RNA sequence: GGGAACGACUCGAGUAGAGUCGAAAAUCCUAAGUCGCAGCGAUGAGAGCGUGAGGUUCAAUGGUGGGAUACCAUAUCGGAAACGAUAUGGGAGAACCCACGCUCGAGCUGCGAUAUGGAAAACAGGUGCAGUUACGUUCGCGUAACUGCACCUGAAACCUGUUUGUUGAUUCGUCAACAAACAGGUAAAAGAAACAACAACAACAAC
Reactivity to 2A3 in 0.01 (KOAc 150mM, MgCl2 10mM, bicine 150mM(pH8.5), 24C), signal-to-noise 5, nucleotides 027 to 156: u030c010c010u020a070a020g010u000c010g000c010a000g000c020g190a300u160g070a170g010a020g130c030g010u020g010a240g030g010u010u010c080a130a180u270g110g090u150g080g120g010a040u110a160c000c000a000u000a000u000c010g000g040a050a030a050c010g000a000u000a000u000g000g000g000a010g000a000a000c010c000c010a000c010g000c000u000c000g000a000g000c000u000g000c000g000a000u000a000u020g020g030a050a080a040a060c020a000g000g000u000g010c000a010g000u000u010a010c000g040u040u110c250g000c000g110u010a000a000c000u000g010c000a000c000c000u000g000a000a000
Reactivity to DMS in 0.01 (KOAc 150mM, MgCl2 10mM, bicine 150mM(pH8.5), 24C), signal-to-noise 1, nucleotides 027 to 156: u010c000c000u000a000a300g020u000c000g020c000a000g040c040g000a220u020g030a170g000a040g030c000g050u000g010a200g020g000u010u000c000a230a140u000g030g070u000g000g030g010a270u010a120c010c010a000u020a010u040c010g040g010a250a130a300c010g020a000u010a000u000g000g000g000a150g040a030a060c020c000c000a020c000g020c000u000c010g000a060g040c000u010g010c000g020a000u000a030u010g020g000a090a040a090a140c000a020g010g010u000g020c000a000g000u000u000a030c000g070u000u010c300g010c020g140u000a000a040c000u020g000c000a000c000c000u000g020a000a100

Conditions: 150 mM KOAc, 10 mM MgCl2 and 150 mM bicine (pH 8.5), 24 C. The record gives the reactivity of an RNA of 207 nucleotides to 2A3 and DMS. For DMS the reverse transcriptase was MarathonRT.